The data come from the RNA Mapping Database (RMDB), library OK3TST. This 207-nucleotide RNA was probed chemically with DMS and 2A3.
[RMDB]
RNA sequence: GGGAACGACUCGAGUAGAGUCGAAAAACAAAAGCUGAAAGCAGAUUGCAGUUGGUGAAAAUGGAGAUUGUUUCCUAACUGAUAUUUGUAACACUUGUUUUGUAACUUAGCUUGUAUGUGACAUAUCUGUUAAAGUGCAGUCAUCCACCUGUAGGGAUAAAUCCAUCGGAUUCGUCCGAUGGAUUUAAAAAGAAACAACAACAACAAC
Reactivity to DMS in 0.01 (KOAc 150mM, MgCl2 10mM, bicine 150mM(pH8.5), 24C), signal-to-noise 2, nucleotides 027 to 156: a110c040a060a080a070a130g040c020u010g010a090a050a190g010c040a120g010a070u000u000g030c010a080g040u000u000g010g000u010g010a030a070a090a060u000g000g020a230g000a080u000u010g020u010u000u010c010c010u000a080a060c020u000g000a060u000a020u000u010u010g020u000a100a090c040a070c030u000u000g010u000u000u000u010g010u000a060a190c110u000u000a070g030c040u010u000g010u000a040u000g020u000g010a040c040a090u000a050u000c010u010g020u000u010a070a070a070g010u000g030c030a100g000u000c020a120u000c020c010a060c040c030u010g020u000a130g000g010g020a190
Reactivity to 2A3 in 0.01 (KOAc 150mM, MgCl2 10mM, bicine 150mM(pH8.5), 24C), signal-to-noise 3, nucleotides 027 to 156: a000c060a030a080a000a050g060c060u100g080a140a000a000g030c030a020g050a140u070u150g010c010a020g030u030u030g000g010u090g070a050a020a040a140u120g040g000a030g030a060u040u040g040u050u110u080c020c020u010a030a020c010u000g020a020u000a040u070u070u030g040u030a050a030c020a010c040u020u020g030u080u170u040u070g100u070a100a090c080u090u070a030g050c000u040u030g030u060a120u060g030u020g010a020c010a030u050a010u040c020u030g010u020u050a110a080a000g080u040g050c020a000g000u040c010a080u060c010c010a050c040c050u040g060u080a020g060g030g020a040
Conditions: 150 mM KOAc, 10 mM MgCl2 and 150 mM bicine (pH 8.5), 24 C. The DMS profile rests on 4,938 reads.